The data come from the RNA Mapping Database (RMDB), library OK3TST. This 207-nucleotide RNA was probed chemically with 2A3 and DMS. For DMS the reverse transcriptase was MarathonRT. Reactivities are rounded to 0.1 and cut off at 0 and 3. Values cover nucleotides 27 to 156. The 2A3 profile rests on 1,732 reads.
RNA sequence: GGGAACGACUCGAGUAGAGUCGAAAAGAUGGAGGGUCGGGCCUCGGACGCCUCCUAUAAGAUGUAACUAUUACGAGGCCAUUAAUGGCGUUUUCGCCUAGGUGCACGCCGGCGUGCGUGACACCGUAAGACUUAAUGAAUAACACGCCGGAUACAAAUCCUAUAAAUCGUUCGCGAUUUAUAGGAUAAAAGAAACAACAACAACAAC
Reactivity to 2A3 in 0.01 (KOAc 150mM, MgCl2 10mM, bicine 150mM(pH8.5), 24C), signal-to-noise 2, nucleotides 027 to 156: g070a040u090g000g020a000g000g000g000u010c060g010g020g000c000c000u000c010g020g000a020c030g100c040c000u020c010c000u020a050u050a050a060g040a050u160g070u160a110a040c030u020a010u140u070a050c020g000a000g000g000c000c000a010u010u040a080a090u090g010g000c000g050u040u050u190u260c000g020c020c000u000a040g000g000u010g000c000a010c000g020c030c010g010g010c000g020u030g000c000g000u010g050a090c000a010c000c000g010u000a070a010g070a010c020u040u110a070a030u170g110a050a030u050a200a000c000a000c010g000c000c000g000g010a100u130a100c050a010a190
Reactivity to DMS in 0.01 (KOAc 150mM, MgCl2 10mM, bicine 150mM(pH8.5), 24C), signal-to-noise 2, nucleotides 027 to 156: g000a190u000g010g000a040g000g000g030u010c030g020g040g050c010c030u010c010g050g000a010c030g010c000c010u030c020c010u000a050u000a070a130g020a150u000g000u000a120a170c100u000a140u000u010a190c030g010a030g020g010c010c030a160u020u010a010a070u010g010g060c000g060u000u000u000u020c000g030c000c010u000a090g020g020u000g010c020a030c030g040c000c000g010g000c050g070u000g020c000g000u000g010a210c030a060c000c090g010u010a040a060g000a100c100u000u010a080a120u000g010a140a130u020a110a060c010a000c000g010c000c000g000g010a170u020a090c060a090a140